Description
Structure probing data (2A3 and DMS) for a 177-nucleotide construct. 2A3 is a SHAPE reagent: it acylates the 2'-hydroxyl of flexible nucleotides of all four kinds. It was measured as part of the RMDB library OK2TRN. The RNA was probed in 150 mM KOAc, 10 mM MgCl2 and 150 mM bicine (pH 8.5) at 24 C. Reactivities are given for positions 27 through 126.
[RMDB]
RNA sequence: GGGAACGACUCGAGUAGAGUCGAAAAUUCAGCAUACCGCAACCCAGGCAGCGAUGACAGAUUCUACGACUCAAGGAUCCAGGGAAGGAUAGGGGAGCAGGCAGCCCAUGUGACAAGCCCGGUGCAGCGAGAGAACUCUAUUCGUAGAGUUCUCUCGAAAAGAAACAACAACAACAAC
Reactivity to 2A3 in 0.01 (KOAc 150mM, MgCl2 10mM, bicine 150mM(pH8.5), 24C), signal-to-noise 1, nucleotides 027 to 126: u040u020c030a020g000c000a030u040a170c030c090g040c070a030a020c000c030c000a030g060g010c010a040g030c020g120a100u040g020a040c020a070g040a020u070u000c010u080a060c080g110a070c010u040c070a030a050g090g050a050u060c040c040a020g000g060g020a060a060g050g010a010u060a060g010g010g000g020a010g050c010a000g050g040c000a000g000c000c000c010a040u130g050u000g040a040c030a110a010g000c000c000c010g040g010u060g030c040a040g090
Reactivity to DMS in 0.01 (KOAc 150mM, MgCl2 10mM, bicine 150mM(pH8.5), 24C), signal-to-noise 3, nucleotides 027 to 126: u000u010c070a120g010c080a060u020a090c070c080g010c060a090a150c030c030c010a150g010g010c030a080g040c060g010a080u000g000a130c130a100g010a090u000u000c020u000a060c080g000a070c020u000c050a070a090g000g010a040u010c030c020a060g000g000g020a090a090g020g020a050u000a070g020g000g010g010a080g000c080a060g000g010c050a050g010c030c020c030a040u020g010u010g010a080c070a040a080g000c040c020c020g020g000u010g020c130a100g010